[RMDB]
RNA sequence: GGGAACGACUCGAGUAGAGUCGAAAAGCACUACUAAAGCUGGCUACCCUUACAAUUAUAACACCACUGCUAGUGACCAGAUUCUGAUUGAGAAUGCAGCCGGCCACCGAGUUUGCAUCUCUACCUAACGUUAUACCGUCUUCGGACGGUAUAACGUAAAAGAAACAACAACAACAAC
Reactivity to 2A3 in 0.01 (KOAc 150mM, MgCl2 10mM, bicine 150mM(pH8.5), 24C), signal-to-noise 2, nucleotides 027 to 126: g000c030a040c070u140a010c060u170a270a070a000g050c040u000g000g000c000u060a070c020c000c000u010u070a070c060a100a120u190u060a080u150a230a060c010a000c030c000a010c010u040g000c030u060a000g010u030g140a070c000c000a020g030a070u080u000c010u110g110a160u140u000g010a010g020a120a040u030g000c010a000g020c000c020g000g030c100c000a130c030c050g010a070g120u080u270u120g020c020a030u000c010u010c000u040a080c000c030u030a070
Reactivity to DMS in 0.01 (KOAc 150mM, MgCl2 10mM, bicine 150mM(pH8.5), 24C), signal-to-noise 2, nucleotides 027 to 126: g020c000a060c080u000a070c120u010a060a120a090g020c060u000g000g020c020u000a140c030c040c020u010u000a100c130a070a060u000u010a060u000a080a090c090a000c070c040a030c080u000g020c030u020a040g000u000g000a140c040c040a080g010a050u000u000c050u010g010a110u000u000g010a060g010a060a070u000g000c000a010g030c010c010g020g020c140c150a070c110c020g000a080g000u000u000u000g020c020a030u000c020u000c000u020a100c030c080u010a120
Source: RMDB library OK2TRN, as collected in RNAgym.
This 177-nucleotide RNA was probed chemically with 2A3 and DMS.
2A3 adducts were read by reverse transcription with SuperScript II with manganese.
Reactivities are given for positions 27 through 126.
DMS adducts were read by reverse transcription with MarathonRT.
The reactions ran in a buffer of 150 mM KOAc, 10 mM MgCl2 and 150 mM bicine (pH 8.5), at 24 C.
The DMS profile rests on 1,238 reads.